RNA sequence: GGGAACGACUCGAGUAGAGUCGAAAAUGGACACCCGGCGGGGUGACGGGGGGUGCGGGUGGCUGCCGAGGAGCCAUGGCGGUGGCCGGCAUGGUCGGAGGCGGGACGGGCUUAGGCGGCGCGGGCACAUACCGUUAGAUUUCGAUCUAACGGUAUGAAAAGAAACAACAACAACAAC
Reactivity to 2A3 in 0.01 (KOAc 150mM, MgCl2 10mM, bicine 150mM(pH8.5), 24C), signal-to-noise 1, nucleotides 027 to 126: u110g070g000a000c010a010c020c000c010g070g110c130g040g020g000g020u020g030a050c030g010g010g000g000g000g000u170g050c040g000g070g040u090g060g030c010u020g020c000c000g000a070g100g080a030g010c020c000a040u060g080g000c050g050g060u100g050g120c000c000g000g020c020a050u070g050g000u020c050g000g020a030g000g000c000g000g010g000a020c060g000g000g000c070u070u110a060g050g000c000g030g010c010g000c010g040g030g000c030a010
Reactivity to DMS in 0.01 (KOAc 150mM, MgCl2 10mM, bicine 150mM(pH8.5), 24C), signal-to-noise 2, nucleotides 027 to 126: u020g000g010a200c070a060c010c020c010g010g040c160g010g010g020g040u000g020a070c080g030g010g000g010g020g000u000g040c080g020g000g010u020g010g030c000u000g020c010c040g030a190g040g030a150g000c000c030a030u010g010g010c000g000g020u010g040g020c030c030g000g010c010a040u030g010g020u010c100g020g010a180g000g000c120g010g010g000a100c100g000g000g000c060u010u010a050g000g000c010g010g000c080g020c100g000g000g000c120a160